Background
This 177-nucleotide RNA was probed chemically with DMS and 2A3. Reactivities are given for positions 27 through 126.

RNA sequence: GGGAACGACUCGAGUAGAGUCGAAAAAGUAUCGGGUUCGCCCGAUACUGUUGGCCCGCGGCCUUUGUCCUGUCGCGCGUAUAUUGCGCGCGAUAUACGCGCAUGUGGGGUCGUUCGCGACCCCAAAGCAAUAAAAAUUAUUCGUAAUUUUUAUUGCAAAAGAAACAACAACAACAAC
Reactivity to DMS in 0.01 (KOAc 150mM, MgCl2 10mM, bicine 150mM(pH8.5), 24C), signal-to-noise 4, nucleotides 027 to 126: a010g000u000a000u000c000g010g000g020u000u010c220g010c010c000c000g000a010u000a000c000u000g000u010u000g000g000c010c040c130g020c160g020g010c020c030u000u010u000g000u000c020c010u000g000u010c130g000c010g010c000g010u000a030u000a030u000u010g010c040g030c260g010c010g000a010u000a010u000a020c030g000c020g030c190a070u010g020u000g010g000g010g030u010c010g020u000u010c160g020c000g010a010c000c000c000c000a000a010a090
Reactivity to 2A3 in 0.01 (KOAc 150mM, MgCl2 10mM, bicine 150mM(pH8.5), 24C), signal-to-noise 2, nucleotides 027 to 126: a010g010u000a010u010c000g010g030g010u040u040c170g080c000c000c000g000a000u000a000c000u000g020u010u070g010g010c010c020c040g040c090g010g020c000c040u090u130u180g030u070c010c010u070g090u180c110g010c010g000c000g020u000a040u000a020u040u150g010c140g000c020g000c000g040a000u000a000u010a010c010g010c020g010c040a040u150g080u100g190g030g000g020u000c000g010u030u060c190g000c010g040a020c020c000c000c010a000a000a000